Description
Structure probing data (2A3 and DMS) for a 177-nucleotide construct. For DMS the reverse transcriptase was MarathonRT. Values cover nucleotides 27 to 126. The DMS profile rests on 9,886 reads. The data come from the RNA Mapping Database (RMDB), library OK2TST.

RNA sequence: GGGAACGACUCGAGUAGAGUCGAAAAUGACGCGAUUAGCAUCAUCAGGUAUUGCGCGUAGAACACGGCGCCUCUACCGACGUAAGCGUCGUCGUUUGCAGCAGCUGGAUAAGUUUAUUCAGCGUCAAGUCUAAAGGAUGUUCGCAUCCUUUAGACUAAAAGAAACAACAACAACAAC
Reactivity to 2A3 in 0.01 (KOAc 150mM, MgCl2 10mM, bicine 150mM(pH8.5), 24C), signal-to-noise 4, nucleotides 027 to 126: u090g000a010c000g000c010g030a030u060u030a020g020c000a010u070c010a010u040c020a060g010g040u080a130u120u190g030c080g000c040g020u060a120g090a110a000c010a000c020g000g000c000g010c000c000u000c010u020a030c030c110g190a070c100g020u010a130a020g000c010g010u000c000g000u010c050g000u010u030u070g020c020a040g000c000a000g010c000u020g000g010a030u040a070a060g000u030u110u100a020u030u030c040a050g000c000g010u010c030a030
Reactivity to DMS in 0.01 (KOAc 150mM, MgCl2 10mM, bicine 150mM(pH8.5), 24C), signal-to-noise 4, nucleotides 027 to 126: u010g010a010c020g020c010g010a040u000u000a050g020c000a090u000c140a050u000c040a130g020g010u010a060u010u000g010c050g020c100g030u010a090g020a050a050c090a040c040g000g010c000g010c010c010u010c030u000a030c020c090g020a100c210g010u000a030a240g010c010g010u000c010g020u000c140g030u000u000u000g010c070a110g010c060a080g010c000u000g000g020a010u010a050a190g010u010u010u010a010u000u000c010a060g040c010g020u000c050a050